Record summary
Structure probing data (DMS) for a 177-nucleotide construct. It was measured as part of the RMDB library OK2TST. The RNA was probed in 150 mM KOAc, 10 mM MgCl2 and 150 mM bicine (pH 8.5) at 24 C.
RNA sequence: GGGAACGACUCGAGUAGAGUCGAAAAUUUUGCACGUUCACGCCGCGCUCUGGCGCAAUUUAAUCCGCAUGUCUGGUAUCUUUCGUAUCCGUUUGGCGGAUUUAAUGACAACGCCGUGAAGGCAGCAUCAAUAGAGGGCGUUCGCGCCCUCUAUUGAAAAAGAAACAACAACAACAAC
Reactivity to DMS in 0.01 (KOAc 150mM, MgCl2 10mM, bicine 150mM(pH8.5), 24C), signal-to-noise 1, nucleotides 027 to 126: u010u000u000u000g010c050a120c070g010u000u020c040a030c050g010c060c090g000c030g010c000u000c170u000g010g030c030g040c030a090a020u000u000u000a020a010u000c000c000g030c010a030u010g010u020c030u000g040g000u000a010u000c200u000u060u000c140g030u010a010u020c000c050g010u000u010u010g000g010c010g010g020a010u000u030u000a020a000u000g000a130c150a050a090c090g020c170c000g000u000g000a030a040g010g020c040a090g040c090a160